An RNA of 207 nucleotides, treated with 2A3 and read out base by base. Values cover nucleotides 27 to 156. Source: RMDB library M2RFPK, as collected in RNAgym. Conditions: 150 mM KOAc, 10 mM MgCl2 and 150 mM bicine (pH 8.5), 24 C. For 2A3 the reverse transcriptase was SuperScript II with manganese.

[RMDB]
RNA sequence: GGGAACGACUCGAGUAGAGUCGAAAAAGCCAUACCAUUACGAUGGUAUGGCAAGUCCGUGACGGCGAUGGAUCCCGCCUGGCCGAUGCCGAACUGCCGAUCUGCCUGAUGGUUCCUGCCCCGUCAAAAAACGUAAAGCACUUCGGUGCUUUACGAAUCCUUCUUUAGCGUUCGCGCUAAAGAAGGAAAAAGAAACAACAACAACAAC
Reactivity to 2A3 in 0.01 (KOAc 150mM, MgCl2 10mM, bicine 150mM(pH8.5), 24C), signal-to-noise 2, nucleotides 027 to 156: a000g000c000c010a000u000a000c010c000a010u010u050a060c240g100a000u000g000g000u020a000u000g000g000c010a000a000g040u000c020c010g030u020g010a000c020g000g030c100g040a020u050g010g020a010u040c030c020c010g050c030c050u010g010g000c020c010g020a040u100g150c070c040g100a200a120c130u200g090c060c000g030a010u000c000u000g020c000c010u010g030a060u070g030g010u010u020c010c010u030g040c020c000c010c060g000u000c000a000a000a000a000a100a000c000g020u010a000a010a000g000c020a010c020u040u110c200g130g030u010g000c000u000u000u000a000c000g000a010a020